[RMDB]
RNA sequence: GGGAACGACUCGAGUAGAGUCGAAAAGAUAUGGAGUGAAGCUUUGAUCUACUGUGUCGGAAACGACAUGUAGGGAGCUUCACUCCUAAGUCAUGGUUCAUCGUACCGUUCGCGGUACGAUGAACAAGAUCCUAUGGGUCUUCGGACCCAUAGGAUCAAAAGAAACAACAACAACAAC
Reactivity to DMS in 0.01 (KOAc 150mM, MgCl2 10mM, bicine 150mM(pH8.5), 24C), signal-to-noise 1, nucleotides 027 to 126: g010a020u000a230u000g000g010a010g040u000g000a010a020g010c000u000u010u040g010a050u010c000u020a020c000u020g090u000g000u000c000g000g020a060a020a140c000g010a010c010a010u000g010u000a030g010g000g000a010g000c000u000u000c010a010c020u010c000c000u000a000a060g000u000c000a120u000g010g000u000u010c000a000u000c000g010u020a000c000c000g040u000u020c150g020c010g030g000u000a000c010g000a000u000g000a000a010c000a050a080
Reactivity to 2A3 in 0.01 (KOAc 150mM, MgCl2 10mM, bicine 150mM(pH8.5), 24C), signal-to-noise 2, nucleotides 027 to 126: g000a000u030a030u150g010g000a000g000u000g000a010a020g010c020u250u220u220g160a130u240c000u020a010c050u190g060u020g000u130c010g040g000a040a050a020c010g000a000c010a020u010g000u010a010g040g010g000a000g000c010u010u000c000a010c000u000c000c000u000a010a000g000u000c000a030u150g190g020u000u010c000a000u010c020g030u000a010c000c000g010u080u090c300g000c010g200g000u000a000c000g010a010u000g000a000a000c000a000a000

An RNA of 177 nucleotides, treated with DMS and 2A3 and read out base by base. DMS adducts were read by reverse transcription with MarathonRT. Source: RMDB library TTRDEL, as collected in RNAgym. Conditions: 150 mM KOAc, 10 mM MgCl2 and 150 mM bicine (pH 8.5), 24 C.